[RMDB]
RNA sequence: GGGAACGACUCGAGUAGAGUCGAAAAAGACGAUUAAGAGAAAAUUGCCAAAUCCUUGGUAUCAAUCAUGAGGCUAUCGAGCAUCUUCUCAUACCAGAAAGUUACCCGUAUCUACGUAUUGCUCCUCUGUAGACACAAGAUUCGUCUUGUGUCUACAAAAAGAAACAACAACAACAAC
Reactivity to 2A3 in 0.01 (KOAc 150mM, MgCl2 10mM, bicine 150mM(pH8.5), 24C), signal-to-noise 2, nucleotides 027 to 126: a010g020a020c060g010a040u110u170a180a030g060a000g030a090a060a060a080u140u080g010c030c000a050a000a090u070c060c030u010u010g050g000u070a100u230c070a030a080u010c020a080u080g030a000g050g000c010u050a050u110c030g020a020g010c000a010u030c010u060u020c000u020c010a030u080a100c050c020a060g090a050a060a020g060u090u030a060c000c000c020g040u030a060u040c020u060a000c070g060u060a040u030u170g060c020u010c000c020u020c000
Reactivity to DMS in 0.01 (KOAc 150mM, MgCl2 10mM, bicine 150mM(pH8.5), 24C), signal-to-noise 4, nucleotides 027 to 126: a120g010a110c070g010a050u000u010a120a110g000a120g000a150a050a090a060u000u000g010c030c010a060a110a080u000c050c040u000u000g010g010u000a130u020c140a050a050u000c090a060u000g010a130g000g020c090u000a040u000c110g020a080g010c060a050u000c050u000u010c020u000c060a070u010a090c080c050a100g000a030a040a110g020u000u000a060c040c040c030g020u010a060u000c040u000a060c090g000u010a050u010u000g000c050u010c030c040u000c200